[RMDB]
RNA sequence: GGGAACGACUCGAGUAGAGUCGAAAAGAUAUGGAAUGACCCUUCCGAAGAACGUAUGUCAACUCGGAAACGAGGACAUACGGGAGGAAGAGGUCAUUCCUAAGUCAAACGUGGCUUCGGCCACGAACUAUUCUAGCCUGUUCGCAGGCUAGAAUAGAAAAGAAACAACAACAACAAC
Reactivity to 2A3 in 0.01 (KOAc 150mM, MgCl2 10mM, bicine 150mM(pH8.5), 24C), signal-to-noise 4, nucleotides 027 to 126: g020a020u080a030u160g010g000a020a000u000g000a000c000c000c000u000u030c010c010g050a120a040g040a070a010c020g020u010a010u010g030u030c070a200a190c260u010c010g030g000a040a080a050c000g010a000g000g030a000c000a010u010a000c010g020g000g000a040g010g020a010a010g040a230g000g000u010c000a000u000u000c000c000u000a010a010g000u000c030a040a040a050c020g000u000g000g000c010u070u070c300g140g000c020c000a000c000g000a010a000
Reactivity to DMS in 0.01 (KOAc 150mM, MgCl2 10mM, bicine 150mM(pH8.5), 24C), signal-to-noise 5, nucleotides 027 to 126: g000a060u000a300u000g000g000a020a010u000g010a010c000c000c000u010u000c000c000g010a110a100g000a160a180c020g010u000a000u000g000u000c000a130a200c030u000c010g000g010a110a060a190c010g010a000g000g010a020c000a000u000a000c000g000g000g000a070g000g010a010a000g010a070g040g010u000c000a010u000u000c000c000u000a010a080g000u000c040a050a080a230c030g020u000g000g010c000u000u020c220g050g000c010c000a000c000g000a020a140